[RMDB]
The record gives the reactivity of an RNA of 170 nucleotides to DMS and 2A3. For DMS the reverse transcriptase was MarathonRT.
RNA sequence: GGGAACGACUCGAGUAGAGUCGAAAAAGACACUUCUUCUGGGUUUUAGCUUAUUUUAGUAAGAAACAUGUAGAAGUUUUUACUGAUGGUAAGCUUAAUUGUAGUUUCCAGGACGCUGCCUCUAAUAUACGUGACCACUUCGGUGGUCACAAAAGAAACAACAACAACAAC
Reactivity to DMS in 0.01 (KOAc 150mM, MgCl2 10mM, bicine 150mM(pH8.5), 24C), signal-to-noise 3, nucleotides 027 to 129: a060g050a100c070a050c120u000u020c000u040u000c070u080g080g000g000u000u080u000u010a000g040c010u010u060a050u010u010u020u080a090g030u020a040a030g050a030a040a040c000a020u000g080u010a170g020a170a110g020u000u000u000u000u000a030c010u120g010a060u060g000g010u020a060a000g000c020u020u000a000a000u060u020g040u040a150g000u000u000u000c030c040a070g020g040a060c000g060c050u060g030c050c020u010c100u010a110a120u080a110u000a090c120
Reactivity to 2A3 in 0.01 (KOAc 150mM, MgCl2 10mM, bicine 150mM(pH8.5), 24C), signal-to-noise 1, nucleotides 027 to 129: a030g070a030c040a000c020u050u050c010u040u010c020u040g060g030g000u010u020u020u060a010g000c000u020u000a050u030u080u000u040a000g020u000a040a000g050a090a010a010c020a050u150g040u190a010g030a270a060g030u000u000u000u000u000a010c020u000g030a050u060g010g030u000a000a000g000c000u010u140a030a020u090u150g050u040a080g040u000u030u000c010c010a020g000g010a010c030g040c060u030g010c010c000u070c000u000a040a200u110a040u050a190c090
The RNA was probed in 150 mM KOAc, 10 mM MgCl2 and 150 mM bicine (pH 8.5) at 24 C.